[RMDB]
RNA sequence: GGGAACGACUCGAGUAGAGUCGAAAAAGGAGGUAUGUAACAUGGCAGGCGAUAUCGUAGGUACAAUCGGUGACUUCGUUAAAUUAAUCAUCGAAACUGUAAACAAAUUCACUAACAAAUAAUCCCUUCUUCAUACGUAGUUCGCUACGUAUGAAGAAAAAGAAACAACAACAACAAC
Reactivity to DMS in 0.01 (KOAc 150mM, MgCl2 10mM, bicine 150mM(pH8.5), 24C), signal-to-noise 1, nucleotides 027 to 126: a090g020g000a080g000g060u040a010u010g000u000a060a030c110a090u010g010g030c040a050g000g040c070g000a040u000a100u010c080g010u000a050g040g000u000a060c010a090a060u000c060g030g020u000g040a020c060u030u030c150g000u010u020a040a100a140u010u030a120a040u000c010a000u000c060g010a030a100a080c120u000g050u010a030a020a050c090a050a050a040u000u000c100a080c030u010a060a130c160a040a050a060u010a080a130u010c010c000c010u010
Reactivity to 2A3 in 0.01 (KOAc 150mM, MgCl2 10mM, bicine 150mM(pH8.5), 24C), signal-to-noise 2, nucleotides 027 to 126: a020g080g000a050g060g000u090a050u130g090u050a030a060c070a090u060g050g000c000a000g000g050c000g020a020u000a010u080c060g020u050a030g030g070u050a030c040a020a100u030c000g000g070u020g010a020c050u050u000c090g100u040u060a030a030a000u120u110a040a010u080c020a010u010c010g000a070a080a000c050u020g050u140a070a020a010c030a010a120a000u090u070c010a000c070u060a080a010c050a040a100a040u080a060a070u050c030c000c000u000